RNA sequence: GGGAACGACUCGAGUAGAGUCGAAAAGUUAUUUCAAAGUCAGGCCUGUUCAGUGCCGGUGAGCAGGUGAAGAUAAGGAACAACCCAGCACUCGUCAUCGGCUUUCACCUCAGCCGAGAAGCAGUCCUGAUGCUCGAGUGUUCGCACUCGAGCAUCAAAAAGAAACAACAACAACAAC
Reactivity to DMS in 0.01 (KOAc 150mM, MgCl2 10mM, bicine 150mM(pH8.5), 24C), signal-to-noise 1, nucleotides 027 to 126: g000u000u010a210u000u010u000c080a070a190a220g020u000c010a070g040g000c040c010u000g000u000u010c000a100g000u020g010c040c060g010g030u000g020a010g000c000a000g050g000u000g000a130a090g010a040u000a150a300g000g010a080a030c100a060a110c070c040c010a150g050c080a180c140u000c030g040u000c030a030u000c000g010g010c000u000u000u000c040a050c000c050u000c200a080g000c000c010g010a010g000a120a010g080c090a050g030u010c100c050
This 177-nucleotide RNA was probed chemically with DMS.